[RMDB]
RNA sequence: GGGAACGACUCGAGUAGAGUCGAAAAUGGAUGCAGAAAUAGAAUGGAGAUCAGGGCAGGAUUAGGAAGUCCAGAAACUGACCCUGAACAUGUGGAAAGUCAGAGUGUGUGAAAGGUGUCAUUUUGAAUUGGCAGGGAGAUGUGAGACUGUCCAAAAGAUAGGACACGUUUUCGAACGUGUCCUAUCAAAAGAAACAACAACAACAAC
Reactivity to 2A3 in 0.01 (KOAc 150mM, MgCl2 10mM, bicine 150mM(pH8.5), 24C), signal-to-noise 3, nucleotides 027 to 156: u130g040g000a020u030g030c040a010g100a050a100a010u140a030g070a070a070u090g020g040a080g010a070u030c020a010g000g000g000c000a010g010g020a040u040u100a050g090g020a120a060g100u100c050c020a040g050a050a060a020c020u060g200a220c010c030c010u000g000a010a000c000a010u110g010u060g030g040a070a030a010g030u020c020a000g010a010g030u060g010u030g000u010g060a080a040a020g020g000u050g000u050c050a030u050u090u050u090g070a080a040u050u050g030g000c020a010g020g010g010a100g000a040u060g010u040g010a040g020a030c030u030g020u040c000c000a000a010a000a130
Reactivity to DMS in 0.01 (KOAc 150mM, MgCl2 10mM, bicine 150mM(pH8.5), 24C), signal-to-noise 2, nucleotides 027 to 156: u000g000g010a090u000g000c040a090g010a060a030a150u010a110g010a100a130u000g000g000a130g040a150u000c010a060g020g000g070c040a070g000g000a100u000u000a140g010g000a170a110g020u000c030c030a180g020a100a090a120c000u000g010a050c000c000c000u000g020a040a080c050a060u010g000u000g020g000a100a050a120g020u000c060a080g010a130g010u010g020u000g000u020g020a080a050a050g010g040u000g000u000c040a160u010u010u000u010g010a080a090u000u010g020g000c020a030g020g060g030a130g000a050u010g000u010g000a130g020a080c010u010g030u000c020c020a050a040a060a190
About this RNA: This 207-nucleotide RNA was probed chemically with 2A3 and DMS. Reactivities are given for positions 27 through 156. For DMS the reverse transcriptase was MarathonRT. The DMS profile rests on 3,547 reads. Source: RMDB library OK3TST, as collected in RNAgym.